[RMDB]
RNA sequence: GGGAACGACUCGAGUAGAGUCGAAAAGUUAUGCUCUCGCUGCCUAAUGGCGGUGCGGGAAACCCACUGUAAAGUCCUUAGGGUUAGCCCCUUAAGGCGGGGUUCGGAGGCACCUGGCAACAGAAGCUGAAACUGUGCACAUUCGUGUGCACAGUAAUAAUUAGGCAUAUUUCGAUAUGCCUAAUUAAAAAGAAACAACAACAACAAC
Reactivity to DMS in 0.01 (KOAc 150mM, MgCl2 10mM, bicine 150mM(pH8.5), 24C), signal-to-noise 2, nucleotides 027 to 156: g040u010u000a060u000g020c020u000c010u000c000g030c000u000g050c010c000u000a120a170u020g030g010c040g020g050u000g000c030g020g000g020a080a080a050c000c000c010a160c080u000g040u000a080a090a120g010u010c000c020u000u000a030g010g000g030u000u010a190g000c190c240c010c010u000u000a020a030g010g000c010g020g050g040g000u000u010c090g020g010a300g010g030c000a050c010c000u010g000g010c090a080a190c020a050g000a050a080g040c010u000g000a110a060a070c000u030g000u000g000c000a010c000a170u000u000c300g000u040g040u000g000c000a040c000a010g000u000a020a040
Reactivity to 2A3 in 0.01 (KOAc 150mM, MgCl2 10mM, bicine 150mM(pH8.5), 24C), signal-to-noise 2, nucleotides 027 to 156: g050u070u120a120u300g020c000u000c000u000c000g000c030u030g000c030c000u290a300a220u230g010g000c000g000g070u010g000c000g000g020g020a050a030a010c000c060c000a030c070u080g200u300a070a000a100g300u000c020c000u010u000a000g000g000g040u010u070a020g040c000c000c000c000u000u070a000a000g000g000c000g000g010g000g020u040u090c180g140g010a030g020g030c000a000c000c000u030g270g000c000a020a000c010a000g000a010a000g000c000u020g000a010a020a010c000u010g010u000g010c020a000c000a040u020u080c230g100u090g000u010g000c000a000c000a000g000u000a000a000